[RMDB]
RNA sequence: GGGAACGACUCGAGUAGAGUCGAAAAGAUAUGGAUCUCAGGAGACAUGCUCGCUCGGAAACGAGAGAGCAACAGCUCCGAGAUCCUAAGUCAAAGCAGCGCUCUAUGUUCGCAUAGAGCGCUGCAAGUAAGUUCUUUGGUUCGCCAAAGAACUUACAAAAGAAACAACAACAACAAC
Reactivity to DMS in 0.01 (KOAc 150mM, MgCl2 10mM, bicine 150mM(pH8.5), 24C), signal-to-noise 1, nucleotides 027 to 126: g000a010u000a260u010g010g000a000u000c000u010c000a120g040g000a020g000a080c160a170u000g000c000u000c000g000c000u010c000g000g000a070a050a150c000g000a010g000a020g010a000g000c000a010a040c220a100g030c000u000c000c000g000a000g020a000u000c000c000u000a010a030g000u000c030a110a090a180g000c000a000g000c000g020c000u000c000u010a000u000g010u000u020c250g010c020a000u000a010g010a010g000c000g010c000u000g000c000a000a030
Reactivity to 2A3 in 0.01 (KOAc 150mM, MgCl2 10mM, bicine 150mM(pH8.5), 24C), signal-to-noise 1, nucleotides 027 to 126: g010a000u070a040u090g000g000a030u030c020u010c180a270g090g000a020g080a170c120a120u040g020c000u000c000g030c020u000c010g030g040a040a000a010c000g000a010g000a010g000a000g040c000a010a030c040a000g010c000u000c000c010g000a010g010a000u000c000c000u000a020a020g010u010c040a120a000a190g000c000a000g040c020g000c010u000c010u030a030u020g110u060u180c250g000c180a010u000a020g000a000g020c000g010c010u000g010c010a000a000

This 177-nucleotide RNA was probed chemically with DMS and 2A3. Values are in units of 0.01, from 0 to 300, in steps of 10. 2A3 adducts were read by reverse transcription with SuperScript II with manganese. The RNA was probed in 150 mM KOAc, 10 mM MgCl2 and 150 mM bicine (pH 8.5) at 24 C. It was measured as part of the RMDB library TTRDEL. For DMS the reverse transcriptase was MarathonRT. For 2A3, 1,963 sequencing reads were counted.